[RMDB]
RNA sequence: GGGAACGACUCGAGUAGAGUCGAAAACAGGCCCGGUAUUCGGAUAGUUCCACUGUACCCAGGAGCCGUCCCAAACGGGUUUAGCGUAAACCUUGAUAGUGCCUGUCCAGUAAGCGACACGGUUGAGGCCGUAAAGGCCUUUCGAGGCCUUUACGGCAAAAGAAACAACAACAACAAC
Reactivity to DMS in 0.01 (KOAc 150mM, MgCl2 10mM, bicine 150mM(pH8.5), 24C), signal-to-noise 2, nucleotides 027 to 126: c070a160g000g000c000c000c000g000g000u000a040u000u010c300g040g000a050u040a170g000u040u010c050c030a050c130u030g000u000a100c010c060c080a090g000g000a040g080c010c000g050u010c000c000c080a010a110a120c130g000g000g060u000u000u000a120g020c120g000u010a040a000a050c030c010u030u040g000a050u080a060g030u010g000c020c020u000g000u000c000c000a190g000u030a080a080g020c100g000a020c060a030c150g020g010u000u000g000a120g010
Reactivity to 2A3 in 0.01 (KOAc 150mM, MgCl2 10mM, bicine 150mM(pH8.5), 24C), signal-to-noise 3, nucleotides 027 to 126: c040a040g030g020c000c000c000g030g000u260a160u030u110c040g000g010a010u010a070g050u050u000c000c010a040c010u070g080u140a100c010c160c030a040g000g000a020g000c000c000g000u020c020c000c000a020a010a000c000g000g000g000u020u070u120a130g050c110g070u160a050a030a060c000c030u060u020g090a150u130a070g160u130g030c000c020u010g030u000c000c000a130g110u170a240a080g090c140g110a020c060a010c090g050g000u050u120g050a090g210
An RNA of 177 nucleotides, treated with DMS and 2A3 and read out base by base. For 2A3 the reverse transcriptase was SuperScript II with manganese. The RNA was probed in 150 mM KOAc, 10 mM MgCl2 and 150 mM bicine (pH 8.5) at 24 C.